[RMDB]
RNA sequence: GGGAACGACUCGAGUAGAGUCGAAAAGUCUCAUUGUUUCCUUAUAAUUAGAUUCAGGCCAGAUGUUUUCAGCAGAAAUUCUACGCAAGUGAGAUUGUGUUGUCGCUGUAGCAAGGGGAGCGCAUGAUACGAUAGAUAGUUUCGACUAUCUAUCGUAAAAAGAAACAACAACAACAAC
Reactivity to 2A3 in 0.01 (KOAc 150mM, MgCl2 10mM, bicine 150mM(pH8.5), 24C), signal-to-noise 6, nucleotides 027 to 126: g040u000c000u000c040a060u050u070g020u020u050u030c030c010u130u110a160u080a220a160u160u110a070g060a130u080u060c040a030g080g000c030c020a050g030a090u040g080u030u100u040u040c010a020g010c010a010g100a070a120a070u130u030c040u060a030c020g000c030a040a030g030u060g090a090g020a110u030u050g020u000g020u040u030g070u040c050g000c030u010g020u050a020g010c030a040a040g020g020g010g010a030g020c040g000c020a010u070g040a060
Reactivity to DMS in 0.01 (KOAc 150mM, MgCl2 10mM, bicine 150mM(pH8.5), 24C), signal-to-noise 9, nucleotides 027 to 126: g000u000c010u000c030a120u010u000g010u000u000u000c010c030u000u010a110u010a100a120u010u010a080g000a100u010u000c070a080g010g000c050c040a100g000a060u010g010u000u000u000u000c040a080g010c060a080g000a050a060a070u000u000c040u000a050c090g010c080a040a050g010u010g000a100g000a100u000u000g010u010g020u000u000g010u000c100g020c030u000g010u000a060g010c060a050a070g000g000g010g010a070g010c070g010c080a060u000g000a210

An RNA of 177 nucleotides, treated with 2A3 and DMS and read out base by base. For 2A3, 10,481 sequencing reads were counted. For DMS the reverse transcriptase was MarathonRT. Conditions: 150 mM KOAc, 10 mM MgCl2 and 150 mM bicine (pH 8.5), 24 C. It was measured as part of the RMDB library OK2TST.